[RMDB]
RNA sequence: GGGAACGACUCGAGUAGAGUCGAAAAGGUGGUGGGCUUGCGUCUUAGCGCGCUCUUUAGUCAGAGUGCCUACACCGAGGAACUUUGGCACGGGGUAACGCAACUACAAUUUCUCGAGCAGAUGCAGCAAUAGGUAACCCUUCGGGGUUACCUAUUGAAAAGAAACAACAACAACAAC
Reactivity to DMS in 0.01 (KOAc 150mM, MgCl2 10mM, bicine 150mM(pH8.5), 24C), signal-to-noise 5, nucleotides 027 to 126: g020g020u000g020g020u000g010g000g010c090u010u010g020c040g010u000c110u000u010a080g000c150g030c040g010c020u000c020u000u000u010a190g010u010c190a030g000a010g010u000g010c000c010u010a060c200a080c140c080g010a090g000g000a080a080c070u000u000u000g010g010c040a110c120g010g000g000g010u000a050a050c080g000c020a040a080c130u010a050c160a060a090u010u000u000c020u000c060g000a090g020c080a070g000a050u010g010c070a110g010
Reactivity to 2A3 in 0.01 (KOAc 150mM, MgCl2 10mM, bicine 150mM(pH8.5), 24C), signal-to-noise 3, nucleotides 027 to 126: g090g000u060g030g100u120g010g040g030c040u040u070g010c030g020u030c040u050u090a060g040c020g000c010g020c060u030c000u020u080u070a060g020u050c030a010g000a000g020u010g030c020c000u050a060c070a070c070c010g010a000g000g020a020a050c070u090u130u110g030g000c090a020c020g040g000g040g010u050a100a000c030g040c050a040a040c030u110a040c110a080a150u060u090u010c030u050c050g020a030g040c010a020g010a130u110g030c000a030g000